Structure probing data (DMS and 2A3) for a 177-nucleotide construct.
Source: RMDB library TTRDES, as collected in RNAgym.
2A3 adducts were read by reverse transcription with SuperScript II with manganese.
2A3 is a SHAPE reagent: it acylates the 2'-hydroxyl of flexible nucleotides of all four kinds.
For DMS the reverse transcriptase was MarathonRT.
RNA sequence: GGGAACGACUCGAGUAGAGUCGAAAAAAGAUAUGGAAAUUGUAGUGCUAUUUUGCUCAUCGAUCAGCCCGUCGGAAACGACGGAGCUGGGAGAGCAAAAUGUGAUCUUGCAAUUUCCUAAGUCAAACACCAUGUUAGAGUUCGCUCUAACAUGGUGAAAAGAAACAACAACAACAAC
Reactivity to DMS in 0.01 (KOAc 150mM, MgCl2 10mM, bicine 150mM(pH8.5), 24C), signal-to-noise 2, nucleotides 027 to 126: a110a120g010a030u010a030u020g000g000a010a000a010u000u000g010u010a000g030u000g010c030u000a020u000u000u000u000g010c000u000c000a300u000c260g010a060u030c010a000g000c000c000c010g040u010c000g020g000a020a000a020c000g030a010c000g000g000a040g020c010u000g010g010g010a000g010a020g000c010a000a000a000a010u000g010u000g000a220u000c000u010u010g010c000a000a000u000u010u000c000c000u010a000a040g000u000c000a110a130a270
Reactivity to 2A3 in 0.01 (KOAc 150mM, MgCl2 10mM, bicine 150mM(pH8.5), 24C), signal-to-noise 3, nucleotides 027 to 126: a000a010g010a020u010a000u050g000g000a000a020a000u020u000g000u010a120g300u080g300c030u020a020u010u010u010u000g000c000u020c030a270u300c110g000a010u000c000a010g020c020c010c000g000u020c020g030g000a010a010a010c000g020a000c010g020g030a070g000c000u010g000g000g000a040g020a000g000c000a000a000a000a000u300g260u050g150a300u090c020u020u040g000c010a000a000u010u010u000c000c000u000a000a000g010u000c010a010a120a070